[RMDB]
RNA sequence: GGGAACGACUCGAGUAGAGUCGAAAAACAUUAGAUGACCUUGUCAGCGUAAUAACAGACCACUCGUUGCUACGAUUUCAGGGAGGUGUCUGGUAGCUUAAGUGACCUCCGGCGCCAGAGCGCUUGAGAAUCUUGGUACGUUCGCGUACCAAGAUUCAAAAGAAACAACAACAACAAC
Reactivity to DMS in 0.01 (KOAc 150mM, MgCl2 10mM, bicine 150mM(pH8.5), 24C), signal-to-noise 2, nucleotides 027 to 126: a060c080a090u000u070a060g030a130u030g000a050c030c020u010u030g000u000c030a000g010c030g010u020a060a010u000a040a100c050a070g000a080c080c060a070c080u000c070g030u000u000g030c070u000a000c070g000a060u000u010u000c040a110g030g020g020a090g000g090u000g000u000c000u000g060g010u020a020g020c030u000u000a050a040g000u070g000a050c150c040u000c050c050g000g000c020g010c000c100a070g000a060g000c030g000c000u010u030g000a300
Reactivity to 2A3 in 0.01 (KOAc 150mM, MgCl2 10mM, bicine 150mM(pH8.5), 24C), signal-to-noise 3, nucleotides 027 to 126: a000c080a110u170u230a060g090a200u150g090a110c010c020u040u050g060u050c020a040g000c050g000u010a000a100u070a080a080c020a000g140a070c030c030a080c130u150c090g230u030u020g010c000u050a060c030g080a100u030u070u080c030a030g000g080g030a030g020g060u030g060u050c020u010g000g050u060a030g000c000u040u040a060a080g030u110g080a100c000c050u040c030c010g040g000c010g000c030c020a030g000a030g010c060g010c010u010u040g000a000
Structure probing data (DMS and 2A3) for a 177-nucleotide construct. Conditions: 150 mM KOAc, 10 mM MgCl2 and 150 mM bicine (pH 8.5), 24 C. The DMS profile rests on 2,389 reads. For 2A3 the reverse transcriptase was SuperScript II with manganese. For DMS the reverse transcriptase was MarathonRT.